[RMDB]
RNA sequence: GGGAACGACUCGAGUAGAGUCGAAAACAAGUUGGUGUUCUGAAUGUUAACCAAGUAACAUCCCUGUAGGGCAUUGACAAUGUUGAUCUCUUUUGAGACCCUUCUCAGGUGCUACAAGCUAAUAUGGCCACUAGUUUUAGUUCGCUAAAACUAGUGGAAAAGAAACAACAACAACAAC
Reactivity to DMS in 0.01 (KOAc 150mM, MgCl2 10mM, bicine 150mM(pH8.5), 24C), signal-to-noise 4, nucleotides 027 to 126: c030a090a200g010u000u000g000g010u000g010u000u000c010u000g010a110a040u010g000u000u010a060a120c080c100a070a110g000u010a030a030c050a050u000c030c020c170u010g010u010a040g020g000g000c030a010u000u000g010a020c090a070a090u000g010u010u000g010a100u000c020u000c020u000u000u000u010g010a060g010a040c040c010c060u000u010c060u000c040a080g000g030u000g010c010u000a060c100a100a130g000c050u000a040a080u000a100u000g000g010
Reactivity to 2A3 in 0.01 (KOAc 150mM, MgCl2 10mM, bicine 150mM(pH8.5), 24C), signal-to-noise 3, nucleotides 027 to 126: c040a040a060g030u040u000g010g010u010g030u060u000c030u060g100a170a090u040g020u060u030a060a070c070c050a050a040g030u010a030a010c010a030u070c050c030c010u060g130u160a050g000g010g000c020a010u020u050g030a020c010a010a120u070g020u010u090g150a160u020c000u000c000u080u170u080u110g020a020g000a020c000c010c030u070u010c060u010c010a060g000g060u040g010c010u050a060c030a100a030g020c000u070a100a060u110a180u240g120g000